[RMDB]
RNA sequence: GGGAACGACUCGAGUAGAGUCGAAAAUGUCCGAUUCGUCGGACAAGAGAGGGGUCGCACGGAGGGACAUGAGCGUACUGAAGCCUCCACGGUAUGGCUCAACAGCCUCCCCACCCGUGCGACGGAGGCACCCGUGGCUGAGGACUUCGGUCCUCAACACGGUUGGCAAUUUCGAUUGCCAACCGUGAAAAGAAACAACAACAACAAC
Reactivity to DMS in 0.01 (KOAc 150mM, MgCl2 10mM, bicine 150mM(pH8.5), 24C), signal-to-noise 1, nucleotides 027 to 156: u000g020u000c000c010g020a100u000u000c300g030u020c000g010g000a060c000a020a060g000a180g000a150g030g000g030g000u010c020g050c010a050c020g020g020a070g010g050g020a130c060a070u000g020a040g000c020g010u000a040c020u000g010a070a130g010c020c010u000c020c030a300c020g000g000u000a000u000g000g040c010u000c000a060a110c110a150g000c050c060u000c010c000c010c010a080c020c000c040g030u000g040c000g000a020c000g000g050a020g070g010c010a080c010c000c110g000u000g000g000c030u020g000a020g010g000a050c000u010u000c290g040g000u030c020c020u000c000a000a050
Reactivity to 2A3 in 0.01 (KOAc 150mM, MgCl2 10mM, bicine 150mM(pH8.5), 24C), signal-to-noise 3, nucleotides 027 to 156: u050g020u000c010c000g000a020u040u100c300g060u000c020g100g000a000c020a040a010g150a000g060a020g000g060g010g010u000c020g020c000a000c010g040g000a070g030g040g060a060c130a250u090g000a000g000c000g020u000a000c000u010g030a120a000g000c010c000u030c000c000a000c000g010g010u010a000u060g300g030c010u030c070a100a140c140a160g200c060c050u150c050c000c000c000a040c000c000c000g000u000g000c000g000a000c000g000g010a010g010g010c000a030c000c030c010g090u090g070g000c130u080g000a010g000g000a010c010u010u060c250g060g010u020c000c000u000c000a020a000